[RMDB]
RNA sequence: GGGAACGACUCGAGUAGAGUCGAAAAUGGCACAUAAGUAAUGAUUUUUAAGGAACAUCAGAUAAAACUCAAUAUGUUAGCCAAUCUACAGAAAAGUUCCUGGAUAGCAUACACUUGGUGAACACAGGUCUCUCAUAGGAUUCGUCCUAUGAGAGACAAAAGAAACAACAACAACAAC
Reactivity to DMS in 0.01 (KOAc 150mM, MgCl2 10mM, bicine 150mM(pH8.5), 24C), signal-to-noise 2, nucleotides 027 to 126: u000g010g010c010a050c040a050u000a030a050g000u020a120a100u000g020a030u000u010u000u020u010a070a110g030g000a030a070c100a060u000c030a040g000a170u000a050a070a130a070c070u000c040a070a180u010a050u000g010u000u000a110g030c020c020a040a090u000c030u000a050c090a170g000a030a040a130a180g010u000u000c010c000u000g000g000a040u000a020g000c000a060u000a050c090a080c070u000u030g020g010u000g000a060a120c090a050c120a090g000
Reactivity to 2A3 in 0.01 (KOAc 150mM, MgCl2 10mM, bicine 150mM(pH8.5), 24C), signal-to-noise 2, nucleotides 027 to 126: u010g000g000c010a000c010a060u080a140a000g050u080a130a100u080g020a040u060u070u050u080u160a120a070g070g010a030a010c010a040u050c020a040g000a070u060a130a150a030a010c040u000c000a130a000u050a020u200g030u070u060a030g010c040c020a020a090u030c010u050a080c030a010g100a050a080a020a040g020u000u040c010c020u000g010g020a090u060a030g050c010a020u050a020c020a030c070u050u010g070g000u060g100a120a010c070a020c020a020g220
Overview:
This 177-nucleotide RNA was probed chemically with DMS and 2A3. It was measured as part of the RMDB library OK2TRN. The 2A3 profile rests on 1,225 reads.